[RMDB]
RNA sequence: GGGAACGACUCGAGUAGAGUCGAAAAGACUACAACUCAAGCCGUCGGAUACGCCGUGCAGGAUUCGGCGGACGGUGACGCGCUGCGUCAAAGAUCGGUGAUUGGCGGCUCGAAGCCUUUUACCCUGCACCUGAAACUAGUUCGCUAGUUUCAGGUGAAAAGAAACAACAACAACAAC
Reactivity to DMS in 0.01 (KOAc 150mM, MgCl2 10mM, bicine 150mM(pH8.5), 24C), signal-to-noise 2, nucleotides 027 to 126: g000a050c030u000a100c140a110a110c180u000c040a050a060g020c000c000g010u000c030g000g020a060u010a160c020g010c010c040g010u010g000c300a090g000g000a110u000u000c020g000g010c020g000g000a030c060g020g000u010g000a120c100g000c030g000c080u000g010c040g030u000c020a040a090a050g010a060u010c050g000g010u000g020a110u000u000g020g000c030g000g000c050u030c070g010a060a050g000c040c010u000u000u010u000a150c030c000c070u000g010
Reactivity to 2A3 in 0.01 (KOAc 150mM, MgCl2 10mM, bicine 150mM(pH8.5), 24C), signal-to-noise 3, nucleotides 027 to 126: g010a020c050u100a050c150a240a070c050u010c060a040a000g010c000c000g000u000c020g050g000a050u080a170c020g000c020c000g010u040g030c050a060g000g110a070u050u050c020g020g000c040g000g020a030c030g040g020u090g050a050c000g010c000g020c090u110g000c000g040u000c030a110a150a010g150a080u120c020g000g040u040g010a080u030u050g020g010c000g000g020c000u020c030g030a030a000g000c000c000u010u020u010u050a070c000c000c010u030g010